Chemical mapping of a 177-nucleotide RNA with 2A3 and DMS. For DMS the reverse transcriptase was MarathonRT. Reactivities are given for positions 27 through 126. Conditions: 150 mM KOAc, 10 mM MgCl2 and 150 mM bicine (pH 8.5), 24 C. It was measured as part of the RMDB library OK2TST. The DMS profile rests on 6,754 reads.
RNA sequence: GGGAACGACUCGAGUAGAGUCGAAAAUACUGUAUACACAUGGGCCUACGGAGAUAGUGACCCCCAGUGGGAGGAGGCAUGGUAUUUAGCCAGCUUUAGGGCUAAUGUUACAUUGGAUGAGCUCAAGGUAUUCCUCGUAUUUCGAUACGAGGAAUACAAAAGAAACAACAACAACAAC
Reactivity to 2A3 in 0.01 (KOAc 150mM, MgCl2 10mM, bicine 150mM(pH8.5), 24C), signal-to-noise 3, nucleotides 027 to 126: u110a020c040u040g050u120a090u050a120c090a000c010a150u100g040g000g000c000c020u010a020c040g100g040a100g010a080u090a090g070u100g190a170c010c000c000c000c020a040g050u090g000g030g000a070g020g000a010g020g000c010a010u040g020g010u030a090u070u070u030a040g010c000c020a030g000c050u120u090u130a080g010g020g010c000u030a010a000u030g020u060u040a050c050a100u010u140g070g030a020u020g060a030g050c010u040c040a020a010g090
Reactivity to DMS in 0.01 (KOAc 150mM, MgCl2 10mM, bicine 150mM(pH8.5), 24C), signal-to-noise 6, nucleotides 027 to 126: u000a090c050u000g010u010a090u010a100c130a070c090a080u000g030g000g010c020c020u010a090c080g010g010a090g010a100u010a090g010u010g010a190c040c010c020c050c050a090g020u000g010g000g010a070g000g010a080g020g010c050a040u000g010g010u000a070u000u000u000a050g010c010c010a140g010c180u000u000u000a100g000g000g010c010u000a020a010u010g010u000u010a060c070a090u000u000g010g000a090u000g000a090g010c030u000c060a080a080g010